[RMDB]
RNA sequence: GGGAACGACUCGAGUAGAGUCGAAAAUCCAGGUCGUGCCUUUUGGAAGAAACUCCUAAAGGACUUGACUGGAUGCCCGCCUGACCUGCCCGAGCUUUCCACCGCUAGUCGAGCGGACUAAUGGCAAGCUCUCCGACCCUUAGAAUUUCUUCUUAGGCUUUCAGGUAGAGUUCGCUCUACCUGAAAGAAAAGAAACAACAACAACAAC
Reactivity to 2A3 in 0.01 (KOAc 150mM, MgCl2 10mM, bicine 150mM(pH8.5), 24C), signal-to-noise 2, nucleotides 027 to 156: u020c000c000a030g050g230u060c040g050u120g120c000c000u010u000u020u060g060g030a080a090g070a240a210a070c070u010c000c000u010a020a000a010g070g000a230c040u130u290g050a020c020u000g000g000a000u020g070c000c020c000g020c040c030u050g040a080c000c060u070g020c040c010c040g020a010g020c000u020u010u000c010c000a020c000c000g000c010u060a060g130u270c080g110a000g040c000g020g000a030c100u260a080a090u080g000g010c010a010a000g000c000u010c000u010c010c030g110a120c010c010c020u060u110a040g040a100a050u290u150u080c090u050u000c000u060u030a070g090g090